Source: RMDB library RSTRND, as collected in RNAgym. This 207-nucleotide RNA was probed chemically with 2A3.

RNA sequence: GGGAACGACUCGAGUAGAGUCGAAAACAAGUCUGGUGAACCGCUUUUAAUAGCACCAAAGCCCGCCGUAAAAAAAAAACAUAGCCAGAUGUCGGAAACAGGCAACGUCAUGGAAAAAUUUCUCGAGCACCAUGAUACACUUGUAAAUUGCGGGAAACUACAAUAUCAGGUUCGCCUGAUAUUGUAGAAAAGAAACAACAACAACAAC
Reactivity to 2A3 in 0.01 (KOAc 150mM, MgCl2 10mM, bicine 150mM(pH8.5), 24C), signal-to-noise 1, nucleotides 027 to 156: c000a030a030g040u010c000u040g000g000u040g040a090a050c010c030g010c000u000u100u140u020a280a130u160a070g000c010a030c060c020a110a070a180g050c000c000c000g010c010c030g070u080a100a070a020a050a050a000a000a050a000a000c080a020u090a000g010c000c000a000g010a030u020g120u170c010g060g060a000a060a120c000a070g000g000c090a100a000c050g010u010c010a000u000g030g020a110a020a130a110a090u040u080u040c160u070c040g060a050g060c060a040c020c000a000u010g010a000u070a040c070a000c000u000u010g010u000a040a080a040u120u110g000c030g000g000g000a040a100a000

Reactivities are given for positions 27 through 156. The reactions ran in a buffer of 150 mM KOAc, 10 mM MgCl2 and 150 mM bicine (pH 8.5), at 24 C.